Structure probing data (DMS and 2A3) for a 177-nucleotide construct. The reactions ran in a buffer of 150 mM KOAc, 10 mM MgCl2 and 150 mM bicine (pH 8.5), at 24 C.

RNA sequence: GGGAACGACUCGAGUAGAGUCGAAAAGAGCGUCGAGAGACGAAGAGAAGUGCAUCGAUCCACAACGGAGAACGUAAUAAUGCACUCAUGUGGGUUAGUGUCCGGAACAACGGGCACAAGAGGCAGACACCGACGAUCAUUUCGAUGAUCGUCGGUGAAAAGAAACAACAACAACAAC
Reactivity to DMS in 0.01 (KOAc 150mM, MgCl2 10mM, bicine 150mM(pH8.5), 24C), signal-to-noise 2, nucleotides 027 to 126: g000a150g000c000g000u070c000g020a220g000a300g010a040c000g000a060a110g020a110g000a080a040g000u000g010c000a000u040c070g000a060u000c000c000a010c060a020a160c300g020g000a000g010a080a080c070g060u010a140a200u000a120a060u010g050c050a040c000u010c000a070u000g080u000g000g000g030u000u000a110g080u000g020u000c000c000g000g000a060a030c290a190a170c000g010g000g040c000a000c020a000a070g000a060g000g000c110a140g000a170
Reactivity to 2A3 in 0.01 (KOAc 150mM, MgCl2 10mM, bicine 150mM(pH8.5), 24C), signal-to-noise 2, nucleotides 027 to 126: g110a020g030c000g000u010c000g010a040g030a000g000a000c030g010a000a000g070a020g050a250a140g040u000g020c020a000u030c000g050a130u000c020c000a040c010a270a030c150g020g030a000g020a120a060c080g040u040a100a020u060a220a040u110g030c020a000c050u030c000a070u030g030u020g000g090g000u020u000a070g020u000g040u000c000c000g000g040a100a100c060a130a000c070g000g000g000c000a000c000a000a000g010a000g040g020c050a000g020a030
Background:
Source: RMDB library OK1LIB, as collected in RNAgym. The 2A3 profile rests on 802 reads.